[RMDB]
RNA sequence: GGGAACGACUCGAGUAGAGUCGAAAAGAUAUGGACUCGCGGUAGGGAGACGGUCGGAAACGACCGAAUCGAAGAACUACCCGAGUCCUAAGUCAAACUCAGGUUGUCGUUCGCGACAACCUGAGAACUCUAAUGUGUUCUUCGGAACACAUUAGAGAAAAGAAACAACAACAACAAC
Reactivity to DMS in 0.01 (KOAc 150mM, MgCl2 10mM, bicine 150mM(pH8.5), 24C), signal-to-noise 2, nucleotides 027 to 126: g000a010u000a100u010g000g000a020c010u000c000g030c280g000g010u000a000g010g000g000a080g000a300c000g000g000u000c010g020g000a010a080a100c000g000a030c000c000g020a000a080u000c010g010a160a090g030a130a220c000u010a010c000c000c000g000a020g000u000c000c000u000a010a030g010u000c020a120a130a160c010u000c000a010g010g000u000u000g010u000c000g010u010u030c240g010c020g000a010c000a010a010c000c000u000g010a000g000a050a100
Reactivity to 2A3 in 0.01 (KOAc 150mM, MgCl2 10mM, bicine 150mM(pH8.5), 24C), signal-to-noise 2, nucleotides 027 to 126: g010a000u040a020u100g000g000a010c000u000c020g100c300g040g000u020a010g070g290g040a030g000a010c010g000g000u000c010g030g020a060a030a020c020g010a000c040c020g000a020a040u020c010g070a200a080g080a150a100c000u000a010c000c000c000g000a000g000u000c000c000u000a000a000g000u000c010a030a030a080c000u000c000a000g000g020u000u010g020u000c020g030u060u150c260g030c000g190a010c000a030a000c000c000u000g000a000g000a000a000
An RNA of 177 nucleotides, treated with DMS and 2A3 and read out base by base. Source: RMDB library TTRDEL, as collected in RNAgym. For DMS the reverse transcriptase was MarathonRT. For DMS, 2,310 sequencing reads were counted. 2A3 adducts were read by reverse transcription with SuperScript II with manganese. Values cover nucleotides 27 to 126.